[RMDB]
RNA sequence: GGGAACGACUCGAGUAGAGUCGAAAAUGGUCACUCUAUAGGUUUGUCGCUAGGACCCGGAUUAGGAACAAAUGAAAACAAACUUUGUGCCAAAUUGGGAGAAGGACUUACAUUCAAUUCCAACAACAUUUGCAUUAAUGACAAUAUUAACACCCUAACGGAAGAAAUCAUUCGUGAUUUCUUCCGUAAAAGAAACAACAACAACAAC
Reactivity to 2A3 in 0.01 (KOAc 150mM, MgCl2 10mM, bicine 150mM(pH8.5), 24C), signal-to-noise 4, nucleotides 027 to 156: u080g020g020u060c010a020c040u090c120u120a050u060a190g060g020u030u030u030g020u050c010g010c130u060a070g020g090a060c030c000c000g020g050a100u070u150a110g020g040a070a030c030a030a100a030u170g070a070a070a020a050c030a070a050a040c020u040u080u070g020u020g030c010c000a020a070a120u060u020g010g000g000a060g020a070a070g050g000a020c000u030u060a020c060a060u010u070c010a020a130u060u030c040c030a030a050c030a060a010c020a150u060u070u100g050c020a030u000u230a120a030u180g050a030c020a040a040u070a080u200u130a090a050c030a080c040c000c020u000a030
Reactivity to DMS in 0.01 (KOAc 150mM, MgCl2 10mM, bicine 150mM(pH8.5), 24C), signal-to-noise 2, nucleotides 027 to 156: u010g030g040u000c000a060c020u010c080u020a160u000a060g020g020u000u010u010g030u000c020g020c040u010a090g030g030a150c000c020c020g050g030a160u010u010a120g020g010a040a050c020a040a060a080u010g010a120a130a120a080c060a050a070a070c080u020u000u000g020u000g000c000c000a020a150a040u030u000g020g010g020a050g000a200a060g000g010a060c060u000u000a150c120a050u000u010c030a050a300u000u010c020c020a060a070c030a030a060c000a030u000u000u000g020c050a130u000u000a030a110u000g030a060c020a020a140u010a160u000u000a040a070c030a080c010c030c030u010a120
An RNA of 207 nucleotides, treated with 2A3 and DMS and read out base by base.
The DMS profile rests on 2,155 reads.
For 2A3, 1,978 sequencing reads were counted.